[RMDB]
RNA sequence: GGGAACGACUCGAGUAGAGUCGAAAAGAUAUGGACUAGUUUACUUCAACAGCGUGGAGUCGGAAACGACUCGUAACAUCGACAUGAAGAAAGCUAGUCCUAAGUCAAAGCGGCGUUCGCGCCGCAACCGAUAGAACAACUUCGGUUGUUCUAUCGGAAAAGAAACAACAACAACAAC
Reactivity to 2A3 in 0.01 (KOAc 150mM, MgCl2 10mM, bicine 150mM(pH8.5), 24C), signal-to-noise 2, nucleotides 027 to 126: g020a010u070a040u100g000g000a000c000u000a010g050u040u050u080a100c010u020u000c010a120a110c050a250g140c030g030u020g030g000a010g020u000c010g010g000a030a010a090c010g000a000c020u000c020g030u050a000a060c060a250u280c030g070a070c050a130u140g000a010a010g000a060a020a000g020c020u020a010g000u040c000c000u000a020a010g010u010c020a120a000a110g000c000g020g000c010g040u050u150c260g010c000g010c160c000g020c000a000a000
Reactivity to DMS in 0.01 (KOAc 150mM, MgCl2 10mM, bicine 150mM(pH8.5), 24C), signal-to-noise 2, nucleotides 027 to 126: g010a010u000a300u010g000g000a000c010u000a000g010u000u000u010a150c000u000u010c000a000a060c200a200g020c060g030u000g030g010a050g050u020c010g000g020a120a110a190c000g010a010c010u000c020g020u010a050a070c110a010u010c010g000a110c070a120u000g000a000a000g000a110a030a040g040c000u000a000g000u000c000c000u000a020a040g000u000c030a040a080a170g020c010g020g040c000g010u010u000c220g030c010g000c000c000g000c000a010a030
Chemical mapping of a 177-nucleotide RNA with 2A3 and DMS.
It was measured as part of the RMDB library TTRDEL.
The DMS profile rests on 1,365 reads.
For 2A3, 4,031 sequencing reads were counted.
The RNA was probed in 150 mM KOAc, 10 mM MgCl2 and 150 mM bicine (pH 8.5) at 24 C.